[RMDB]
RNA sequence: GGGAACGACUCGAGUAGAGUCGAAAAGAAAACAAGUACCGAGAACAUUGUUUUCGCUGCUUGGCGUUGCCGUUUUGUGUUGCAGUUGGUUGGGUAACGCCGCAAAUACCAACAGUAUAGAUAGAUACAUGCAUACGGUGUUCGCACCGUAUGCAUGAAAAGAAACAACAACAACAAC
Reactivity to DMS in 0.01 (KOAc 150mM, MgCl2 10mM, bicine 150mM(pH8.5), 24C), signal-to-noise 2, nucleotides 027 to 126: g020a080a040a160a140c050a010a010g010u020a030c300c040g000a000g000a010a040c010a170u050u080g000u010u000u000u010c010g000c120u020g030c040u000u000g000g020c010g010u000u020g000c010c000g020u000u000u020u050g010u000g040u000u000g010c090a170g030u000u000g000g060u000u030g000g030g010u000a010a100c240g020c000c000g040c030a040a020a130u010a040c020c000a000a000c050a110g010u030a100u070a080g020a070u010a100g030a150u000a080
Reactivity to 2A3 in 0.01 (KOAc 150mM, MgCl2 10mM, bicine 150mM(pH8.5), 24C), signal-to-noise 1, nucleotides 027 to 126: g050a000a000a000a000c030a000a000g020u090a110c090c090g000a040g030a010a010c020a270u080u130g010u000u000u000u000c000g020c000u030g030c000u020u090g000g000c040g000u000u030g010c010c000g010u060u030u140u170g160u000g040u080u060g100c040a040g000u050u060g070g000u060u080g000g000g000u000a010a000c000g000c000c000g000c010a060a060a000u160a030c000c000a000a040c030a040g030u090a000u040a190g130a090u090a030g110a000u040a050
This 177-nucleotide RNA was probed chemically with DMS and 2A3. Source: RMDB library OK1LIB, as collected in RNAgym. The RNA was probed in 150 mM KOAc, 10 mM MgCl2 and 150 mM bicine (pH 8.5) at 24 C. Values cover nucleotides 27 to 126.